Structure probing data (2A3) for a 177-nucleotide construct. The 2A3 profile rests on 563 reads. For 2A3 the reverse transcriptase was SuperScript II with manganese.
RNA sequence: GGGAACGACUCGAGUAGAGUCGAAAACUUGUUAUUUACAGCAAAGUUAAUAGCAUUAAUUAUACUUUGAUAUGUUCCAGUACCAUCUUUAUUUAAUGCUUUUGCUAUUAAUAAUUUACAAUCUGGAAGCACGAUUUACUUUCGAGUAAAUCGUGCUAAAAGAAACAACAACAACAAC
Reactivity to 2A3 in 0.01 (KOAc 150mM, MgCl2 10mM, bicine 150mM(pH8.5), 24C), signal-to-noise 2, nucleotides 027 to 126: c000u020u050g010u040u030a010u040u080u010a060c030a020g020c020a010a060a000g110u180u210a140a020u090a290g010c000a000u000u090a000a050u040u070a030u030a120c150u030u090u130g010a010u070a030u040g050u090u000c110c060a000g050u040a050c000c050a010u050c000u030u080u080a060u020u010u010a020a000u020g000c000u060u070u020u020g000c000u040a000u030u030a080a010u030a000a000u040u140u160a070c050a090a040u030c000u000g040g010a020